Chemical mapping of a 177-nucleotide RNA with 2A3 and DMS. Values cover nucleotides 27 to 126. DMS adducts were read by reverse transcription with MarathonRT. The RNA was probed in 150 mM KOAc, 10 mM MgCl2 and 150 mM bicine (pH 8.5) at 24 C. The 2A3 profile rests on 639 reads.
RNA sequence: GGGAACGACUCGAGUAGAGUCGAAAAGCGCACGGUGGCCCAAGUGACGGUCGGUCAGGCCGAGUUCGCCGACCUUCUGGUGCUGACCCACCCGGAACCGGUCGCCGUGGCGGUUCUGCGCCGACUGGUUGAUGGCGACUUUCGAGUCGCCAUCAACAAAAGAAACAACAACAACAAC
Reactivity to 2A3 in 0.01 (KOAc 150mM, MgCl2 10mM, bicine 150mM(pH8.5), 24C), signal-to-noise 1, nucleotides 027 to 126: g060c070g020c020a020c020g000g070u070g000g030c070c000c000a100a000g020u060g110a000c000g000g000u000c000g000g000u010c000a040g000g000c000c000g000a020g020u050u110c100g060c140c110g050a070c020c070u070u010c160u200g030g040u300g170c020u040g010a010c000c000c000a050c010c000c000g010g070a020a000c000c000g040g000u000c020g060c000c010g010u010g010g000c000g000g000u120u070c010u040g000c040g010c000c000g070a110c020u030g130
Reactivity to DMS in 0.01 (KOAc 150mM, MgCl2 10mM, bicine 150mM(pH8.5), 24C), signal-to-noise 1, nucleotides 027 to 126: g030c180g000c040a000c000g000g020u020g000g000c000c010c000a200a140g050u000g000a230c020g010g000u050c300g020g010u000c000a120g000g020c090c000g000a050g010u000u000c170g000c110c090g000a140c130c040u200u000c070u060g010g000u000g000c040u000g000a040c050c000c280a140c070c000c070g000g120a110a000c000c000g060g000u040c000g000c050c000g040u010g000g060c050g000g120u000u000c000u040g000c070g040c040c000g000a030c130u000g000